[RMDB]
RNA sequence: GGGAACGACUCGAGUAGAGUCGAAAAAUGAUCAUAUCGACGAUAUUCACCUUCUUGCUAGCGGAUCUUUCGAGAUCCGUUUUUUCAGGUCAUGGAGCUUUUUGUGCCGUUUCGGUCUCGGAACGGGCAAGACUGCCUUGUUCGCAAGGCAGUCUUGAAAAGAAACAACAACAACAAC
Reactivity to DMS in 0.01 (KOAc 150mM, MgCl2 10mM, bicine 150mM(pH8.5), 24C), signal-to-noise 3, nucleotides 027 to 126: a070u030g010a120u010c140a080u010a100u000c050g020a080c050g000a090u000a030u000u000c020a050c050c040u020u000c060u000u010g010c070u010a060g010c020g000g010a010u000c000u000u020u030c150g000a010g020a010u000c000c000g000u000u000u000u000u000u000c080a060g010g010u010c060a080u010g000g000a110g000c110u010u010u010u000u010g010u010g010c000c000g010u000u000u010c010g000g000u000c220u000c010g040g020a010a000c000g000g010g000
Reactivity to 2A3 in 0.01 (KOAc 150mM, MgCl2 10mM, bicine 150mM(pH8.5), 24C), signal-to-noise 4, nucleotides 027 to 126: a010u090g010a060u040c040a030u070a020u140c060g080a040c040g020a050u040a060u090u070c070a120c050c000u100u060c030u110u110g090c000u030a000g030c000g000g000a010u000c000u030u100u120c250g030a010g000a000u000c000c000g020u000u000u000u000u000u020c040a030g010g020u020c010a030u140g090g020a030g020c050u060u060u060u110u070g190u170g130c000c010g010u010u000u000c050g050g100u120c150u100c240g020g000a000a000c010g010g000g000